Source information
Structure probing data (2A3 and DMS) for a 177-nucleotide construct. For DMS the reverse transcriptase was MarathonRT. Source: RMDB library OK2TST, as collected in RNAgym. The reactions ran in a buffer of 150 mM KOAc, 10 mM MgCl2 and 150 mM bicine (pH 8.5), at 24 C.
[RMDB]
RNA sequence: GGGAACGACUCGAGUAGAGUCGAAAAGGUUUCGUUAAUAAGAGUGUUGUGUUAUUACCUAGCUUUUUCACAUACACCGCUGUCAAUAUAACCAUUGAUCUUGGUAUGAAGCUUAGUGGUUAUGGUCCAAGGGCUUAUUAUUCGUAAUAAGCCCUUGAAAAGAAACAACAACAACAAC
Reactivity to 2A3 in 0.01 (KOAc 150mM, MgCl2 10mM, bicine 150mM(pH8.5), 24C), signal-to-noise 3, nucleotides 027 to 126: g070g000u030u020u070c010g030u060u120a090a030u070a140a040g050a030g060u050g040u050u110g020u020g020u030u050a060u080u040a020c000c100u020a040g060c060u080u050u020u040u020c020a030c020a020u160a030c020a030c040c010g040c060u020g050u080c050a140a000u080a010u000a170a000c000c000a010u000u020g010a000u000c000u000u030g080g140u300a120u300g140a010a000g000c020u010u010a000g000u020g010g000u000u030a000u000g020g050u000c070
Reactivity to DMS in 0.01 (KOAc 150mM, MgCl2 10mM, bicine 150mM(pH8.5), 24C), signal-to-noise 5, nucleotides 027 to 126: g000g010u000u000u000c040g010u010u000a040a040u000a050a050g010a220g020u010g010u000u000g020u000g010u000u000a020u000u000a020c040c070u000a050g000c060u000u000u000u000u010c030a060c050a060u010a080c080a060c060c020g010c130u000g010u010c060a090a110u000a020u000a020a010c010c000a010u000u000g000a020u000c020u000u000g020g020u020a110u010g010a030a020g010c160u000u010a010g030u000g000g000u000u000a010u000g010g010u010c080